Annotation
The data come from the RNA Mapping Database (RMDB), library OK1LIB. This 177-nucleotide RNA was probed chemically with 2A3. For 2A3, 695 sequencing reads were counted. Reactivities are given for positions 27 through 126. Conditions: 150 mM KOAc, 10 mM MgCl2 and 150 mM bicine (pH 8.5), 24 C.
RNA sequence: GGGAACGACUCGAGUAGAGUCGAAAAUUGCCGCUGCACUCAGAACUUAUUGCCGCAUAUUGGAUGUUCCGGCAGAACCGUCCUUAAUUCACACUGAGACUAUGUGGCAUCUGUCCACCGAAAUCAAGGAGUCCAUCCAUUUCGAUGGAUGGACUCCAAAAGAAACAACAACAACAAC
Reactivity to 2A3 in 0.01 (KOAc 150mM, MgCl2 10mM, bicine 150mM(pH8.5), 24C), signal-to-noise 2, nucleotides 027 to 126: u030u050g080c030c000g050c030u040g000c060a030c100u010c010a060g030a180a030c160u140u150a110u130u120g000c000c000g080c020a100u070a050u260u090g130g000a140u080g040u080u080c000c000g080g000c050a060g040a050a000c030c000g030u060c000c000u040u050a060a020u120u100c030a020c010a020c120u000g000a000g050a170c020u010a060u170g000u030g030g060c000a000u030c000u070g010u000c000c010a060c010c000g020a010a000a070u060c150a190a010